RNA sequence: GGGAACGACUCGAGUAGAGUCGAAAAGGCGCGCGCCGAGACCUCCCACCGUCGGGGCGUCUGGCGGUUCGGCGGGCCAACGGGGCCGUGACCGGUAAAUGCGCUCCCUUGGCCGAGCGCGGAUGGAGCUAGGCUAUCAUUUCGAUGAUAGCCUAGCAAAAGAAACAACAACAACAAC
Reactivity to 2A3 in 0.01 (KOAc 150mM, MgCl2 10mM, bicine 150mM(pH8.5), 24C), signal-to-noise 1, nucleotides 027 to 126: g090g020c010g020c000g000c020g000c010c020g040a050g070a190c000c050u020c000c000c000a040c000c030g030u030c000g010g000g080g300c100g160u140c010u020g030g000c020g040g000u010u040c000g000g010c000g010g010g010c000c000a010a020c040g000g050g010g000c070c010g040u040g030a060c020c120g000g040u200a150a130a000u110g010c080g020c050u030c000c020c010u000u040g030g000c030c000g070a060g020c000g030c000g030g020a110u050g020g020a040
Reactivity to DMS in 0.01 (KOAc 150mM, MgCl2 10mM, bicine 150mM(pH8.5), 24C), signal-to-noise 2, nucleotides 027 to 126: g020g010c020g010c010g030c030g040c000c000g000a080g010a260c110c060u000c040c000c050a110c010c030g000u000c040g000g030g030g030c230g020u000c030u000g020g020c050g000g010u010u010c010g020g010c000g010g000g030c010c010a030a030c300g020g020g000g020c040c020g020u000g010a120c090c080g000g000u000a050a130a040u000g000c080g000c000u000c000c020c030u000u000g000g030c010c020g000a050g010c010g010c010g030g000a120u010g010g000a300

An RNA of 177 nucleotides, treated with 2A3 and DMS and read out base by base. 2A3 is a SHAPE reagent: it acylates the 2'-hydroxyl of flexible nucleotides of all four kinds. The RNA was probed in 150 mM KOAc, 10 mM MgCl2 and 150 mM bicine (pH 8.5) at 24 C. For DMS the reverse transcriptase was MarathonRT.